This 177-nucleotide RNA was probed chemically with DMS and 2A3. The DMS profile rests on 3,087 reads. Conditions: 150 mM KOAc, 10 mM MgCl2 and 150 mM bicine (pH 8.5), 24 C. Source: RMDB library TTRDEL, as collected in RNAgym.
RNA sequence: GGGAACGACUCGAGUAGAGUCGAAAAGAUAUGGACUGGCGGGAGCUCACUAUCGGAAACGAUAGUGAGCGAGGAUCGCAGUCCUAAGUCAAAGCGUGACAUCGUAGUUCGCUACGAUGUCACGCAACAUCUUAUAUGAGUUCGCUCAUAUAAGAUGAAAAGAAACAACAACAACAAC
Reactivity to DMS in 0.01 (KOAc 150mM, MgCl2 10mM, bicine 150mM(pH8.5), 24C), signal-to-noise 1, nucleotides 027 to 126: g000a050u000a300u010g000g000a010c000u010g030g030c000g000g000g000a070g010c000u000c000a000c000u000a000u000c000g000g010a080a070a140c020g030a010u000a010g010u010g000a000g030c000g000a060g020g010a070u000c020g010c000a020g000u000c000c000u000a010a030g000u000c010a100a120a180g010c010g010u000g010a010c030a000u000c000g000u000a010g010u000u010c240g010c000u000a000c010g000a020u000g010u010c000a000c030g000c000a010a060
Reactivity to 2A3 in 0.01 (KOAc 150mM, MgCl2 10mM, bicine 150mM(pH8.5), 24C), signal-to-noise 2, nucleotides 027 to 126: g010a010u050a030u130g000g000a010c010u060g270g300c020g020g000g010a010g000c000u010c000a010c010u000a000u000c000g020g010a060a020a050c000g000a000u000a000g000u030g000a000g000c000g000a010g000g000a000u000c010g000c000a000g010u010c010c000u020a090a010g020u040c050a120a110a040g030c020g000u020g000a010c040a030u020c010g000u000a030g030u070u130c300g040c190u000a000c020g000a010u020g000u000c000a000c050g020c000a000a000